RNA sequence: GGGAACGACUCGAGUAGAGUCGAAAAGGAAAGUAAAGAAAGCAACGGGGCUAGCGAGUGGAUGUUCCACCCCCCAGCGGUGCCGAGUGAGGCCUAUCCCGGGGAUCGGUGAAUCGUCCCGGAAUGGAAAGAGACCUGUUCGCAGGUCUCAAAAGAAACAACAACAACAAC
Reactivity to 2A3 in 0.01 (KOAc 150mM, MgCl2 10mM, bicine 150mM(pH8.5), 24C), signal-to-noise 7, nucleotides 027 to 129: g040g010a050a030a010g050u180a020a030a050g070a030a060a000g030c010a030a050c060g000g000g020g000c050u090a030g030c020g040a000g020u060g030g050a070u130g070u120u030c010c000a020c000c010c000c000c000c010a000g020c020g030g010u050g000c010c020g010a030g040u150g040a070g020g010c010c010u090a070u090c020c010c010g030g010g000g010a100u160c050g030g020u060g100a090a030u120c020g030u040c040c010c000g010g030a030a040u120g020g040a080a080a020
Reactivity to DMS in 0.01 (KOAc 150mM, MgCl2 10mM, bicine 150mM(pH8.5), 24C), signal-to-noise 5, nucleotides 027 to 129: g000g040a060a040a060g040u000a050a050a070g000a050a090a040g000c080a060a080c160g040g020g010g030c020u030a050g050c000g010a080g040u030g030g020a120u000g060u030u020c000c000a060c050c040c020c010c000c050a050g030c120g000g050u000g030c010c020g000a000g020u030g040a110g030g030c030c040u000a020u030c060c020c030g020g000g060g030a060u040c040g030g040u000g040a070a060u000c060g020u000c000c030c020g000g040a040a060u040g000g000a050a080a100